[RMDB]
RNA sequence: GGGAACGACUCGAGUAGAGUCGAAAAGCAGUUUCACUCACUGUAGACUCUGAGCGCAGAGUGUCAGUCGUGCUACCACAUGCACGUGAUCAGAGUAUGUGUGAACUCUGACUGACGACUCAAUCGCUUGAGUCCUAUAUAAUGAAACUGGUGAGUCGAUAAAAUGCCUAUUCGUAGGCAUUUUAUCAAAAGAAACAACAACAACAAC
Reactivity to 2A3 in 0.01 (KOAc 150mM, MgCl2 10mM, bicine 150mM(pH8.5), 24C), signal-to-noise 7, nucleotides 027 to 156: g060c010a010g000u000u010u010c010a010c030u020c010a090c030u030g020u030a010g000a010c000u010c100u140g060a010g000c020g010c080a020g000a000g070u010g010u000c000a000g000u000c010g010u010g010c020u070a140c030c080a060c020a070u070g000c000a010c090g040u100g090a100u150c060a010g030a010g040u030a050u080g160u020g040u050g070a040a030c000u000c030u060g010a010c000u000g000a000c020g040a020c000u000c000a040a170u120c010g000c000u000u000g000a000g000u000c000c030u030a020u010a010u020a030a070u050g030a020a010a010c020u020g020g050u070g050a040g090u140c100
Reactivity to DMS in 0.01 (KOAc 150mM, MgCl2 10mM, bicine 150mM(pH8.5), 24C), signal-to-noise 2, nucleotides 027 to 156: g000c000a020g010u000u010u000c010a020c030u000c080a060c100u000g020u000a050g000a040c010u000c010u010g030a140g000c040g030c150a300g010a050g000u010g000u000c010a040g010u020c010g020u000g010c010u000a280c080c050a010c070a060u000g020c030a120c060g000u000g000a120u000c060a180g020a190g020u010a030u000g020u000g000u020g000a080a030c000u000c010u000g040a030c000u000g000a040c010g030a030c020u000c000a040a110u000c070g040c030u000u000g000a010g000u000c030c030u000a030u010a060u000a040a050u000g000a050a020a020c010u000g030g010u000g000a130g020u000c090
Chemical mapping of a 207-nucleotide RNA with 2A3 and DMS.
Conditions: 150 mM KOAc, 10 mM MgCl2 and 150 mM bicine (pH 8.5), 24 C.
Source: RMDB library OK3TST, as collected in RNAgym.
DMS adducts were read by reverse transcription with MarathonRT.